Overview
Chemical mapping of a 177-nucleotide RNA with DMS and 2A3.
[RMDB]
RNA sequence: GGGAACGACUCGAGUAGAGUCGAAAAGGAAAUAAUGCACAUAUUCCAGUCGCAGACGCUAAAAAUAACGCUGCGUCGCGACGGAUGUGGCAACGCACACCGAAGUGCAAACGGUAGCGUAAAAAAAUCUAAUGGUUACCUUCGGGUAACCAUUAGAAAAAGAAACAACAACAACAAC
Reactivity to DMS in 0.01 (KOAc 150mM, MgCl2 10mM, bicine 150mM(pH8.5), 24C), signal-to-noise 1, nucleotides 027 to 126: g010g010a000a090a060u000a110a180u030g000c000a080c010a060u030a050u040u010c000c040a060g010u000c000g010c000a150g030a020c010g000c030u010a010a090a040a020a110u010a090a100c180g000c170u010g010c020g030u000c010g000c020g000a030c040g000g000a000u000g020u000g000g050c060a080a050c030g000c000a070c090a150c010c020g000a120a120g000u120g000c130a070a080a080c000g010g000u000a070g010c080g000u030a000a000a040a020a120a040a070
Reactivity to 2A3 in 0.01 (KOAc 150mM, MgCl2 10mM, bicine 150mM(pH8.5), 24C), signal-to-noise 1, nucleotides 027 to 126: g120g010a150a000a100u150a110a060u100g030c010a010c030a190u060a000u300u000c010c000a060g010u010c020g020c090a190g040a030c010g000c030u130a180a060a100a140a120u300a170a020c130g060c180u040g000c000g020u000c000g000c000g020a010c010g000g020a000u000g000u000g010g000c030a040a000c000g010c010a050c010a000c120c020g040a120a040g190u180g180c020a130a000a000c010g000g000u020a000g000c010g020u120a110a000a000a000a000a000a000

The DMS profile rests on 721 reads.